[RMDB]
This 177-nucleotide RNA was probed chemically with DMS and 2A3. The DMS profile rests on 2,909 reads.
RNA sequence: GGGAACGACUCGAGUAGAGUCGAAAACCACCGAUUACUGUAACCCGUACUUCAUGGUCUAGUCGGUCUACUGCACGGAGAAGAAUAUCUAGACCUUUACGAUGUUCAUCAAGACGCCCUAAAAAGAGUCAGCAGUAUAUUUCGAUAUACUGCUGACAAAAGAAACAACAACAACAAC
Reactivity to DMS in 0.01 (KOAc 150mM, MgCl2 10mM, bicine 150mM(pH8.5), 24C), signal-to-noise 4, nucleotides 027 to 126: c020c010a140c100c070g000a090u000u000a040c070u020g030u000a070a100c060c040c030g010u000a080c180u000u010c090a080u000g020g000u000c020u000a040g030u000c050g000g020u000c040u000a120c030u010g010c140a070c090g000g020a080g000a080a060g010a070a060u000a050u000c020u000a050g010a070c060c040u010u000u000a100c110g020a050u010g010u010u000c040a080u000c060a040a060g010a100c070g010c000c020c010u000a030a060a070a090a070g010a210
Reactivity to 2A3 in 0.01 (KOAc 150mM, MgCl2 10mM, bicine 150mM(pH8.5), 24C), signal-to-noise 3, nucleotides 027 to 126: c010c000a020c000c030g130a100u090u130a100c040u070g040u110a050a050c000c000c030g020u020a060c060u060u100c060a120u100g040g000u010c030u030a030g010u040c080g010g040u000c010u070a130c040u090g100c050a030c140g050g050a040g000a110a010g040a030a040u060a020u050c010u010a020g060a070c000c000u020u090u020a020c020g010a010u030g030u060u050c030a050u040c020a090a020g080a050c050g040c000c000c010u110a090a090a030a000a000g150a020
The 2A3 profile rests on 3,833 reads.